RNA sequence: GGGAACGACUCGAGUAGAGUCGAAAAGCACUCCUUUUCGAAGGAGUGCCCAGGCCCGCGGCCUUUGUCCUGUCGCGUGUGCGCCGCGCGCGAUAUACGCGCAUCUGUGCAUAUUCGUAUGCACAAAGUGAGACGAUUAAUUCGUUAAUCGUCUCACAAAAGAAACAACAACAACAAC
Reactivity to DMS in 0.01 (KOAc 150mM, MgCl2 10mM, bicine 150mM(pH8.5), 24C), signal-to-noise 2, nucleotides 027 to 126: g000c010a020c000u000c000c000u000u010u000u010c140g000a010a020g010g010a020g030u000g000c000c020c070a050g020g030c030c020c070g000c100g000g000c010c020u000u000u030g010u010c080c070u010g020u010c020g020c010g010u000g020u000g000c050g020c040c030g010c080g000c060g020c000g000a110u000a030u000a070c030g000c010g010c170a070u000c150u010g010u000g000c000a000u000a010u000u010c200g020u000a000u010g000c020a010c000a030a060a060
Reactivity to 2A3 in 0.01 (KOAc 150mM, MgCl2 10mM, bicine 150mM(pH8.5), 24C), signal-to-noise 3, nucleotides 027 to 126: g000c000a000c000u020c010c000u020u030u050u110c180g080a010a010g000g000a000g000u000g020c000c010c000a030g040g000c000c020c040g070c070g030g020c040c000u100u100u210g060u070c010c030u070g070u160c010g000c010g010u050g020u020g050c050g000c020c020g130c010g000c010g000c000g040a020u040a020u040a190c010g000c010g000c030a050u030c080u050g010u000g000c020a000u020a030u050u070c160g080u020a000u000g000c000a010c000a010a030a010